[RMDB]
RNA sequence: GGGAACGACUCGAGUAGAGUCGAAAAAUUAGCUGGGUGUGAUGGCACGCGGCUGUAAUCCUAGCUACUCAGGAGGCUGAGGCAGGAGACUCGCUUGAACCCGGGAGGCAGAGGUUGCAGUGAGCCAAGAUCGUGCAACUGCACUCCAGCCUGGGUGUCUAACUACACAAUUCGUUGUGUAGUUAGAAAAAGAAACAACAACAACAAC
Reactivity to DMS in 0.01 (KOAc 150mM, MgCl2 10mM, bicine 150mM(pH8.5), 24C), signal-to-noise 3, nucleotides 027 to 156: a130u000u000a030g020c000u020g020g000g030u010g020u000g020a140u000g020g010c030a040c060g030c060g020g030c000u000g010u000a040a100u000c010c010u000a000g020c030u000a040c030u010c030a060g000g010a140g030g030c020u000g020a050g010g020c040a110g010g010a100g010a050c080u000c040g000c030u010u000g000a060a090c000c000c020g020g000g010a240g010g010c060a080g010a140g020g020u000u000g010c010a020g010u000g010a240g000c050c070a060a100g010a060u010c050g010u000g030c000a070a030c030u010g000c040a070c030u000c000c010a090g000c000c010u010g000g020g010u000g010
Reactivity to 2A3 in 0.01 (KOAc 150mM, MgCl2 10mM, bicine 150mM(pH8.5), 24C), signal-to-noise 5, nucleotides 027 to 156: a010u110u070a010g010c010u020g020g120g040u010g010u030g090a220u150g150g000c000a010c020g160c000g040g000c010u020g010u050a050a040u020c000c000u010a040g000c030u090a110c000u000c030a040g020g050a090g130g080c050u030g010a020g010g000c020a020g000g030a020g020a040c010u000c040g000c020u040u090g050a030a030c010c000c000g030g020g000a050g030g010c090a030g020a030g100g020u130u090g000c000a000g000u020g080a040g010c020c020a110a030g120a160u180c070g050u110g080c010a020a000c000u020g000c010a000c030u000c020c010a030g020c000c000u020g010g000g000u030g010
Structure probing data (DMS and 2A3) for a 207-nucleotide construct. It was measured as part of the RMDB library OK3TST. The RNA was probed in 150 mM KOAc, 10 mM MgCl2 and 150 mM bicine (pH 8.5) at 24 C. High DMS reactivity at an A or C suggests that its Watson-Crick edge is free. For DMS the reverse transcriptase was MarathonRT.